The record gives the reactivity of an RNA of 177 nucleotides to 2A3 and DMS. The 2A3 profile rests on 1,096 reads. Values cover nucleotides 27 to 126. The RNA was probed in 150 mM KOAc, 10 mM MgCl2 and 150 mM bicine (pH 8.5) at 24 C.
[RMDB]
RNA sequence: GGGAACGACUCGAGUAGAGUCGAAAAAGAGGCAACAACUUUCCGAAGCUUGGGAAAACUCUCAAUGUUCCUCCGCCCCCGAACCCCAGUAGGGCCAGCACUUCCGAGACACCCAUUAAAAAGGGCAGAGAUACGUCUGGUUCGCCAGACGUAUCUCAAAAGAAACAACAACAACAAC
Reactivity to 2A3 in 0.01 (KOAc 150mM, MgCl2 10mM, bicine 150mM(pH8.5), 24C), signal-to-noise 2, nucleotides 027 to 126: a000g070a010g010g070c090a060a020c000a060a080c130u000u020u020c020c000g100a100a020g060c120u140u160g000g010g030a000a080a050a100c050u040c010u040c060a050a200u080g040u010u070c000c020u030c000c000g020c030c000c000c010c050g030a070a060c000c000c000c000a000g080u120a040g060g080g000c020c030a040g000c010a020c040u100u010c020c020g010a000g050a040c060a050c000c000c000a030u110u200a030a050a040a020a000g050g070g020c010a020
Reactivity to DMS in 0.01 (KOAc 150mM, MgCl2 10mM, bicine 150mM(pH8.5), 24C), signal-to-noise 1, nucleotides 027 to 126: a090g030a060g060g050c060a100a000c010a010a120c080u000u010u040c100c070g020a160a110g000c240u040u000g000g000g000a050a000a070a090c050u020c010u020c050a020a020u090g000u010u000c000c020u030c060c000g010c050c000c000c040c040g000a080a130c090c000c050c000a190g000u030a070g010g000g000c010c010a110g000c110a110c040u000u000c010c010g030a020g000a020c090a100c000c000c030a000u000u050a040a000a030a100a070g030g000g000c040a150